[RMDB]
RNA sequence: GGGAACGACUCGAGUAGAGUCGAAAAGAAAAAGUACGAAAGUACGAUACACGUAGGAAUAAAGUGGACUGAAAAAUUCAGCGCUGAGAGGCGCGAAUGAACUACGUGUGAAUAGUCCACAAUAAAAGGGAUACAUAUAGUUCGCUAUAUGUAUCCCAAAAGAAACAACAACAACAAC
Reactivity to 2A3 in 0.01 (KOAc 150mM, MgCl2 10mM, bicine 150mM(pH8.5), 24C), signal-to-noise 4, nucleotides 027 to 126: g200a020a090a030a000a010g000u020a010c030g050a110a030a030g010u010a000c030g000a010u030a060c010a000c000g010u010a010g050g080a120a120u140a160a130a020g010u000g000g000a000c010u030g090a010a020a000a000a040u050u030c020a070g000c010g000c000u030g060a030g000a020g050g000c000g000c000g010a000a020u020g000a000a010c000u000a000c000g010u000g010u010g020a020a010u030a030g000u020c010c010a000c010a000a060u210a030a050a020a030
Reactivity to DMS in 0.01 (KOAc 150mM, MgCl2 10mM, bicine 150mM(pH8.5), 24C), signal-to-noise 5, nucleotides 027 to 126: g030a060a040a070a090a120g000u000a010c000g000a110a080a140g000u000a000c000g020a300u020a050c000a000c010g000u010a000g010g010a110a070u040a110a040a050g010u000g000g000a010c000u000g010a010a030a030a040a060u000u000c010a120g040c010g010c010u000g000a190g010a120g010g000c010g020c000g010a000a010u010g020a080a080c010u000a000c000g000u000g000u010g010a050a040u010a100g000u010c010c000a000c010a130a040u040a040a050a060a100
Chemical mapping of a 177-nucleotide RNA with 2A3 and DMS. For DMS the reverse transcriptase was MarathonRT. The reactions ran in a buffer of 150 mM KOAc, 10 mM MgCl2 and 150 mM bicine (pH 8.5), at 24 C. For 2A3, 7,360 sequencing reads were counted.